An RNA of 177 nucleotides, treated with DMS and 2A3 and read out base by base. Values cover nucleotides 27 to 126.

RNA sequence: GGGAACGACUCGAGUAGAGUCGAAAAGAUAUGGACCGAGGCUUGGACCCAUGAUAUCGGAAACGAUAUAUGGCUAGCCUCGUCCUAAGUCAAAACCGAUUGGGUUUCUUCGGAAACCCAAUCGGAACACAUCAACCAGGUUCGCCUGGUUGAUGUGAAAAGAAACAACAACAACAAC
Reactivity to DMS in 0.01 (KOAc 150mM, MgCl2 10mM, bicine 150mM(pH8.5), 24C), signal-to-noise 2, nucleotides 027 to 126: g000a030u000a300u020g000g000a010c080c050g040a000g000g010c000u000u020g050g010a160c270c010c020a040u010g020a000u000a000u010c000g000g010a070a080a160c010g010a010u000a010u000a020u000g000g000c040u010a020g000c000c000u000c000g000u000c000c000u000a030a080g000u000c020a130a040a120a200c000c000g000a020u000u000g000g000g000u000u000u000c000u000u010c150g040g010a000a000a000c000c000c010a000a010u000c000g000g000a030a070
Reactivity to 2A3 in 0.01 (KOAc 150mM, MgCl2 10mM, bicine 150mM(pH8.5), 24C), signal-to-noise 2, nucleotides 027 to 126: g010a000u050a030u080g020g000a010c100c260g030a070g010g030c080u240u270g080g130a300c000c000c000a000u300g140a020u100a000u000c010g000g000a040a030a010c020g000a000u000a000u000a000u050g020g000c030u020a010g000c000c000u000c000g000u000c000c000u010a060a020g030u030c040a000a040a110a190c000c000g000a010u000u020g010g000g000u060u000u000c020u050u090c300g090g010a000a000a000c030c000c030a000a000u010c020g000g000a010a010

Background: 2A3 adducts were read by reverse transcription with SuperScript II with manganese. The reactions ran in a buffer of 150 mM KOAc, 10 mM MgCl2 and 150 mM bicine (pH 8.5), at 24 C.